Overview
An RNA of 177 nucleotides, treated with DMS and 2A3 and read out base by base. 2A3 adducts were read by reverse transcription with SuperScript II with manganese. The 2A3 profile rests on 1,042 reads.
RNA sequence: GGGAACGACUCGAGUAGAGUCGAAAAGGUGCUAUGUUCGAAGAGGGUUUUCCUUCUGAGGACGUAGGAUUAGAUUGGAUACAAGUCGUAACAAGGUUGCUGUAGGAGAACCUGCAGCAGGAUCAGUUAAAAUCUCGUACUUCGGUACGAGAUUUUAAAAAGAAACAACAACAACAAC
Reactivity to DMS in 0.01 (KOAc 150mM, MgCl2 10mM, bicine 150mM(pH8.5), 24C), signal-to-noise 2, nucleotides 027 to 126: g010g000u000g010c000u000a010u000g020u000u000c020g000a240a030g010a010g000g010g030u030u020u060u050c000c000u030u000c020u000g000a300g000g000a000c000g020u000a000g000g000a010u000u020a040g000a260u020u010g000g010a130u010a090c060a080a090g000u000c060g000u010a070a150c060a070a060g000g000u010u010g000c000u000g020u000a000g000g000a300g020a080a240c000c000u010g000c000a000g000c000a060g000g020a130u000c060a180g000u000
Reactivity to 2A3 in 0.01 (KOAc 150mM, MgCl2 10mM, bicine 150mM(pH8.5), 24C), signal-to-noise 3, nucleotides 027 to 126: g060g020u080g090c000u000a000u000g000u000u020c010g000a000a000g020a000g080g080g030u030u200u100u300c020c000u010u000c020u020g020a060g020g000a000c020g000u000a000g020g000a000u000u100a030g110a100u070u160g160g000a020u050a100c060a100a000g090u070c010g010u070a060a080c040a100a030g150g030u150u020g000c000u000g000u000a000g010g020a300g020a270a300c000c000u000g000c000a000g000c000a000g000g020a090u020c040a000g020u000